[RMDB]
RNA sequence: GGGAACGACUCGAGUAGAGUCGAAAAGAUAUGGAUGUUGUAGCGCACAACAGCGAAGGUCGGAAACGACCUUCGACAUGUGCCUACUGACAUCCUAAGUCAAAGAGCAUACGUUCGCGUAUGCUCACUUCAUGGUGCCGUUCGCGGCACCAUGAAGAAAAGAAACAACAACAACAAC
Reactivity to 2A3 in 0.01 (KOAc 150mM, MgCl2 10mM, bicine 150mM(pH8.5), 24C), signal-to-noise 1, nucleotides 027 to 126: g080a020u080a020u240g020g000a030u030g000u030u000g000u010a020g070c050g060c170a010c020a100a210c130a150g080c010g010a010a000g010g000u000c000g010g000a000a100a090c020g000a010c040c000u000u000c010g000a000c000a040u070g000u010g030c000c000u000a000c010u020g010a010c000a010u000c010c000u000a110a010g020u000c050a300a090a000g030a000g060c020a020u010a000c010g000u080u180c300g030c020g200u000a000u010g010c000u000c000a000
Reactivity to DMS in 0.01 (KOAc 150mM, MgCl2 10mM, bicine 150mM(pH8.5), 24C), signal-to-noise 2, nucleotides 027 to 126: g000a070u010a300u010g000g000a040u030g030u000u000g010u000a000g030c280g000c000a000c030a000a110c300a260g000c000g010a000a020g010g010u000c000g000g000a150a050a270c010g000a020c000c000u020u000c000g000a050c050a150u000g010u000g000c010c000u000a000c010u000g040a000c000a000u000c000c010u010a020a080g030u010c050a160a160a110g000a010g000c000a000u000a000c000g020u000u000c300g040c010g010u000a000u000g000c000u000c000a010

Annotation: An RNA of 177 nucleotides, treated with 2A3 and DMS and read out base by base. The RNA was probed in 150 mM KOAc, 10 mM MgCl2 and 150 mM bicine (pH 8.5) at 24 C. Reactivities are given for positions 27 through 126. For DMS the reverse transcriptase was MarathonRT. The DMS profile rests on 1,248 reads.